Chemical mapping of a 177-nucleotide RNA with DMS and 2A3.
[RMDB]
RNA sequence: GGGAACGACUCGAGUAGAGUCGAAAAAGACAUACGUUCGCGUAUGUCUGACGGGCACCUGACCCUAAGGAAAUGCUCUAUGACAGGACACACUGAUUGUGUUACCUCGAGAUUUCGAUCUCGAGAAAGAUGUUCAGCUAUUCGUAGCUGAACAUCUAAAAGAAACAACAACAACAAC
Reactivity to DMS in 0.01 (KOAc 150mM, MgCl2 10mM, bicine 150mM(pH8.5), 24C), signal-to-noise 5, nucleotides 027 to 126: a000g010a010c000a000u000a010c000g020u000u010c170g030c010g020u000a000u000g010u000c000u000g000a090c220g000g020g030c020a060c030c010u000g000a160c030c010c020u000a070a050g000g000a080a080a080u000g010c020u000c030u000a080u000g000a200c130a050g000g000a030c030a020c010a050c120u010g010a110u010u000g000u000g010u010u010a120c160c000u000c000g000a010g010a020u000u000u010c200g000a020u000c010u000c000g000a020g000a050a080
Reactivity to 2A3 in 0.01 (KOAc 150mM, MgCl2 10mM, bicine 150mM(pH8.5), 24C), signal-to-noise 4, nucleotides 027 to 126: a000g000a010c010a000u010a010c010g020u020u050c240g000c000g110u000a000u000g000u000c000u000g000a010c020g000g020g040c000a030c030c000u050g130a150c000c010c040u030a040a010g050g010a020a160a070u090g010c000u010c050u060a170u150g150a070c040a050g060g030a020c000a010c010a010c060u150g220a300u200u090g020u010g030u030u070a060c000c010u000c010g000a000g000a000u070u000u160c170g060a020u000c000u000c010g010a000g000a040a010
Reactivities are given for positions 27 through 126. For 2A3 the reverse transcriptase was SuperScript II with manganese. The RNA was probed in 150 mM KOAc, 10 mM MgCl2 and 150 mM bicine (pH 8.5) at 24 C. The DMS profile rests on 5,026 reads. It was measured as part of the RMDB library M2PK50.